An RNA of 177 nucleotides, treated with DMS and 2A3 and read out base by base. It was measured as part of the RMDB library RFM100. The DMS profile rests on 2,793 reads. For DMS the reverse transcriptase was MarathonRT. Conditions: 150 mM KOAc, 10 mM MgCl2 and 150 mM bicine (pH 8.5), 24 C. The 2A3 profile rests on 2,441 reads. Reactivities are given for positions 27 through 126.
[RMDB]
RNA sequence: GGGAACGACUCGAGUAGAGUCGAAAAGAAAGAAAGAAAGAGAACAUCAUUGUCGGUGGCCUGACUCAUAAUAAUUGGAUCAUGUCGUCAAAUAUUAUGAGGUCGGUCAACGACAGUGGCGAUCAAAUGCUAUCAAUCACUUCGGUGAUUGAUAGCAAAAAGAAACAACAACAACAAC
Reactivity to DMS in 0.01 (KOAc 150mM, MgCl2 10mM, bicine 150mM(pH8.5), 24C), signal-to-noise 2, nucleotides 027 to 126: g010a100a060a120g010a130a050a080g000a050a030a120g000a280g010a050a090c090a050u020c000a000u000u010g020u020c000g010g000u010g000g000c020c000u010g000a130c000u000c000a040u000a010a000u000a000a040u000u000g020g000a020u050c260a030u030g010u000c240g000u020c020a030a040a060u000a010u000u000a000u000g010a010g000g000u050c200g000g000u000c000a020a000c000g030a000c000a000g020u000g010g000c070g000a040u000c030a020a120a140
Reactivity to 2A3 in 0.01 (KOAc 150mM, MgCl2 10mM, bicine 150mM(pH8.5), 24C), signal-to-noise 3, nucleotides 027 to 126: g110a030a030a000g080a040a090a000g160a020a110a000g150a000g000a030a020c040a040u010c000a000u010u000g000u000c000g010g010u000g000g010c010c050u120g010a010c000u000c000a000u000a010a000u030a030a080u000u070g060g050a060u160c040a100u290g180u210c090g000u030c040a000a010a000u010a010u030u020a000u000g010a000g050g170u050c000g000g000u000c000a000a000c000g000a000c010a000g000u000g010g000c030g030a020u120c050a000a040a090